[RMDB]
RNA sequence: GGGAACGACUCGAGUAGAGUCGAAAAAAAAGAUAUGGAAAGGUUUGUCAGCGAAUGACCCAGCUAAGUGGUCGGAAACGACCACGAAGCUGCAUUCGCUUGGAUUUAACCUUUCCUAAGUCAAAAAGCACUCUAAUAUGUUCGCAUAUUAGAGUGCAAAAGAAACAACAACAACAAC
Reactivity to 2A3 in 0.01 (KOAc 150mM, MgCl2 10mM, bicine 150mM(pH8.5), 24C), signal-to-noise 1, nucleotides 027 to 126: a000a000a000a000g060a030u100a050u120g000g010a010a000a010g010g000u000u080u070g040u050c030a010g000c010g010a000a000u030g010a120c160c080c010a020g000c000u010a090a000g030u010g010g000u010c010g000g020a060a060a040c000g020a010c010c000a000c000g000a000a000g020c000u010g040c000a000u010u010c000g010c000u010u090g030g000a030u250u140u060a000a000c000c000u030u000u000c000c000u000a000a020g000u010c000a020a010a080a100a050
Reactivity to DMS in 0.01 (KOAc 150mM, MgCl2 10mM, bicine 150mM(pH8.5), 24C), signal-to-noise 2, nucleotides 027 to 126: a060a090a040a220g000a030u010a300u000g000g000a000a010a000g030g000u010u000u000g020u000c000a110g000c000g010a040a010u010g030a180c300c300c040a050g020c000u020a040a300g030u010g010g010u010c000g020g000a080a080a280c020g000a010c000c020a000c000g000a120a030g000c010u000g000c020a010u000u000c000g010c000u000u010g020g000a000u020u010u010a010a010c010c000u000u010u000c000c000u000a020a070g010u010c020a070a100a080a070a170
An RNA of 177 nucleotides, treated with 2A3 and DMS and read out base by base. For DMS the reverse transcriptase was MarathonRT. Conditions: 150 mM KOAc, 10 mM MgCl2 and 150 mM bicine (pH 8.5), 24 C.